[RMDB]
RNA sequence: GGGAACGACUCGAGUAGAGUCGAAAAGAAAGAAAGAAAGAAAUCUGACAGAAUGACGGAUUCGAUCGUUGUGGUCGGCGGGCCACCACGUCAUUCUUUCGCACUGUCUCCGGGCAGACCGCCAUAAAAAAGCGGAUCUACUUCGGUAGAUCCGCAAGUUACUUCGUCACUUCGGUGACGAAGUAACAAAAGAAACAACAACAACAAC
Reactivity to 2A3 in 0.01 (KOAc 150mM, MgCl2 10mM, bicine 150mM(pH8.5), 24C), signal-to-noise 2, nucleotides 027 to 156: g040a040a060a010g040a000a040a010g010a040a020a000g050a010a040a040u040c030u040g070a100c040a100g300a200a220u180g110a060c060g000g040a030u100u070c060g020a030u150c020g010u020u040g000u010g000g030u010c060g000g030c020g000g010g000c000c000a000c020c010a020c000g050u040c010a030u040u000c000u000u010u000c020g000c000a080c030u000g010u020c020u010c030c060g040g020g000c000a010g000a040c000c010g000c010c000a080u300a030a070a000a010a000a000g010c000g000g000a000u030c000u000a010c010u000u030c060g030g000u000a000g000a010u000c000c000g000c000a000a000
An RNA of 207 nucleotides, treated with 2A3 and read out base by base. For 2A3, 991 sequencing reads were counted. It was measured as part of the RMDB library M2RFPK. The RNA was probed in 150 mM KOAc, 10 mM MgCl2 and 150 mM bicine (pH 8.5) at 24 C.